[RMDB]
RNA sequence: GGGAACGACUCGAGUAGAGUCGAAAAGAUAUGGAAUUGUAGCGCGAUAAGAUGGUCGGAAACGACUCAUCUUUUGACGCGUGAGGAUUCCUAAGUCAAAAUCCAAUAAAGUUCGCUUUAUUGGAAACAUCAAUAGACCGUUCGCGGUCUAUUGAUGAAAAGAAACAACAACAACAAC
Reactivity to DMS in 0.01 (KOAc 150mM, MgCl2 10mM, bicine 150mM(pH8.5), 24C), signal-to-noise 2, nucleotides 027 to 126: g010a060u020a300u010g000g000a020a000u000u010g000u000a300g010c000g030c000g020a130u000a000a010g000a000u000g000g000u010c020g000g020a040a030a170c010g010a010c020u020c010a000u000c000u000u000u010u010g000a100c040g020c020g020u030g010a190g000g010a000u000u000c000c000u000a070a190g030u010c050a110a080a080a100u000c000c000a010a010u000a000a010a000g010u000u000c280g030c010u000u000u000a000u000u000g000g010a030a050a080